Chemical mapping of a 177-nucleotide RNA with DMS.
Reactivities are given for positions 27 through 126.
DMS adducts were read by reverse transcription with MarathonRT.
[RMDB]
RNA sequence: GGGAACGACUCGAGUAGAGUCGAAAAGAUAUGGAGAUGGAUAUGACGGCCGUAUACAGCGACGAUCUUGACUGUCGGAAACGACAGCAAGGGAGCUGUACGGCCGUCAUAUCCAUCUCCUAAGUCACUUAUCCUUUAGGUUCGCCUAAAGGAUAAGAAAAGAAACAACAACAACAAC
Reactivity to DMS in 0.01 (KOAc 150mM, MgCl2 10mM, bicine 150mM(pH8.5), 24C), signal-to-noise 1, nucleotides 027 to 126: g010a050u010a300u010g010g000a020g000a020u000g000g000a020u000a000u000g010a020c000g000g040c000c000g010u000a100u000a090c010a010g020c000g000a120c300g000a010u010c010u000u000g000a140c000u000g010u000c000g020g000a060a120a260c000g010a020c000a010g000c000a010a000g000g000g000a010g020c000u010g000u000a000c000g010g010c010c000g020u000c000a000u010a000u000c000c000a000u000c000u000c000c000u000a000a070g000u000c030a250